[RMDB]
RNA sequence: GGGAACGACUCGAGUAGAGUCGAAAAACUGGCAAAUCAAACAAUAAUUUCGCAGUAGCUGCCUAAUCGCACUCUGCAUCGCCUAACAGCAUUUCCUAUAUGCUGUUAACGCGAUUCAACCUUAAUAGGAUAUGCUAAACACUGCCGUUUGAAGUCUGUAUACAAACUUGUUCGCAAGUUUGUAUACAAAAGAAACAACAACAACAAC
Reactivity to DMS in 0.01 (KOAc 150mM, MgCl2 10mM, bicine 150mM(pH8.5), 24C), signal-to-noise 1, nucleotides 027 to 156: a070c070u000g010g020c000a070a110a080u000c090a110a100a040c070a080a120u010a080a170u000u000u010c080g030c010a030g040u000a030g020c100u010g010c000c000u000a100a070u000c130g000c020a050c050u000c020u000g000c000a080u000c040g030c010c050u000a010a030c000a040g030c020a060u010u000u000c180c200u010a090u000a070u010g000c010u000g030u000u000a000a040c050g010c000g010a040u000u000c060a160a140c040c040u010u000a050a110u000a040g000g030a100u000a060u010g020c000u000a120a050a110c070a100c110u000g030c010c000g010u000u000u000g000a040a120g000u010c090u000
Reactivity to 2A3 in 0.01 (KOAc 150mM, MgCl2 10mM, bicine 150mM(pH8.5), 24C), signal-to-noise 9, nucleotides 027 to 156: a000c040u060g030g000c030a020a050a160u090c030a060a060a100c050a050a160u200a200a150u120u220u220c060g000c010a010g030u150a010g020c080u020g000c000c020u050a080a070u150c050g010c060a030c040u070c040u020g000c000a010u000c000g000c010c000u000a000a000c000a000g000c000a000u020u060u170c050c070u120a100u010a000u220g000c000u000g000u000u000a020a010c020g010c000g030a000u070u070c040a040a120c010c030u140u200a080a040u030a100g020g010a040u050a090u200g030c030u080a080a080a040c080a020c050u030g010c020c050g020u010u010u050g040a040a020g030u030c040u030